[RMDB]
RNA sequence: GGGAACGACUCGAGUAGAGUCGAAAAACUGUCGCGUCGGCAAUCCUGGCAUCGAUUCAGGAUAUGUACAUGCCGGAUGUGGCCGCGUUCGUCGAUGAUGACAUUCUGGUCGUGAAGGACCGGGAUAAGCGGGAGGUAAUUUCGAUUACCUCCCGCUAAAAGAAACAACAACAACAAC
Reactivity to 2A3 in 0.01 (KOAc 150mM, MgCl2 10mM, bicine 150mM(pH8.5), 24C), signal-to-noise 2, nucleotides 027 to 126: a040c060u040g000u040c010g020c000g020u040c020g000g000c010a040a020u030c000c030u080g040g000c000a080u030c070g280a180u160u040c040a030g110g000a080u040a180u200g000u050a020c040a050u010g000c000c000g060g000a110u220g160u160g300g000c020c030g050c000g040u040u040c030g000u030c030g080a080u180g010a060u160g000a060c010a130u040u010c030u010g010g000u000c030g050u090g140a080a000g080g010a000c020c000g010g000g000a060u070a030
Reactivity to DMS in 0.01 (KOAc 150mM, MgCl2 10mM, bicine 150mM(pH8.5), 24C), signal-to-noise 1, nucleotides 027 to 126: a080c050u010g000u000c030g000c010g030u020c000g010g010c000a120a020u000c020c010u000g080g000c030a040u000c110g010a190u020u010c050a020g010g010a100u000a050u010g000u000a100c240a030u000g000c010c030g000g000a010u020g010u000g000g070c000c030g020c300g000u020u000c110g000u000c030g000a090u000g020a070u010g000a060c090a050u000u000c010u000g010g020u000c000g000u030g020a150a240g020g000a020c000c000g010g020g010a010u000a060